[RMDB]
RNA sequence: GGGAACGACUCGAGUAGAGUCGAAAAUGUGGGCGGGCGUGCUCGCGCUGUCGGUGCUGAUGUACGUGCUGCUCGACGGCUUCGAUCUCGGCGUGGGGAUGCUGUUUUUCUUUCACCGCGACGAAGAUACUACCCGGACUUUCGAGUCCGGGUAGUAAAAAGAAACAACAACAACAAC
Reactivity to 2A3 in 0.01 (KOAc 150mM, MgCl2 10mM, bicine 150mM(pH8.5), 24C), signal-to-noise 1, nucleotides 027 to 126: u230g010u120g000g030g040c080g050g000g000c020g000u030g010c000u020c000g010c000g000c000u180g200u220c160g100g020u020g020c070u180g030a110u200g030u090a040c000g000u120g280c010u030g020c030u010c000g010a030c000g050g030c040u050u050c030g190a270u010c030u010c000g050g000c000g000u050g040g040g000g000a030u090g080c150u030g280u110u050u060u160u010c000u000u090u110c030a040c030c040g000c020g020a030c010g020a010a010g010a010
Reactivity to DMS in 0.01 (KOAc 150mM, MgCl2 10mM, bicine 150mM(pH8.5), 24C), signal-to-noise 1, nucleotides 027 to 126: u000g000u010g010g010g010c030g010g030g000c020g000u000g000c020u000c020g000c130g010c010u000g000u010c150g040g000u000g000c020u020g010a030u030g020u000a050c010g010u000g020c020u000g020c040u000c010g010a080c150g020g000c050u000u000c010g010a140u000c010u000c020g000g020c050g020u000g000g020g010g010a030u000g010c180u010g030u010u000u000u000u000c020u000u000u000c050a040c010c000g000c150g000a060c090g000a070a060g010a180